[RMDB]
RNA sequence: GGGAACGACUCGAGUAGAGUCGAAAACAACUAUUCGUAGUUGCCUAUUCCUAAGUCAGCUCGGGCUCCAUAAGACAGCUGACAGUCGGAAACGACUGCAGCAAUGACGUGGAGUCUCUAGCGUGGCUGAUAUGGACCUUCGUUGCUUCGGCAACAAACCGUUCUAAAUGUUCGCAUUUAGAACGGUAAAAGAAACAACAACAACAAC
Reactivity to DMS in 0.01 (KOAc 150mM, MgCl2 10mM, bicine 150mM(pH8.5), 24C), signal-to-noise 1, nucleotides 027 to 156: c020a010a000c020u010a020u000u020c200g020u000a000g020u010u000g010c020c020u020a300u000u010c030c020u000a080a190g020u000c010a150g000c060u040c020g020g020g050c000u000c000c000a030u010a080a190g020a270c030a100g000c000u000g000a050c000a050g050u010c020g020g000a130a080a260c000g020a060c010u010g020c000a000g010c020a230a090u020g000a150c120g000u010g000g000a020g010u000c010u020c040u000a050g010c070g030u000g020g020c000u000g000a080u010a080u020g000g000a230c120c040u000u020c090g040u000u000g020c010u000u020c080g020g000c070a090a000c030a020a070
Reactivity to 2A3 in 0.01 (KOAc 150mM, MgCl2 10mM, bicine 150mM(pH8.5), 24C), signal-to-noise 5, nucleotides 027 to 156: c000a000a000c010u050a050u090u120c260g170u100a020g000u000u000g030c000c010u120a220u100u060c010c010u020a030a000g000u010c000a010g000c010u010c030g000g000g000c000u010c000c000a040u030a080a170g120a220c010a140g200c050u020g150a300c010a000g000u000c010g030g030a070a060a050c020g000a010c000u010g010c000a010g000c020a060a300u070g010a010c040g000u000g000g000a000g030u010c000u000c000u010a000g010c090g090u000g020g000c010u020g030a030u040a180u290g060g040a060c020c030u160u160c300g010u010u000g000c000u040u040c230g130g000c000a000a010c000a040a030

The data come from the RNA Mapping Database (RMDB), library RNAMAK.
This 207-nucleotide RNA was probed chemically with DMS and 2A3.
For 2A3, 3,139 sequencing reads were counted.
The DMS profile rests on 1,904 reads.
The reactions ran in a buffer of 150 mM KOAc, 10 mM MgCl2 and 150 mM bicine (pH 8.5), at 24 C.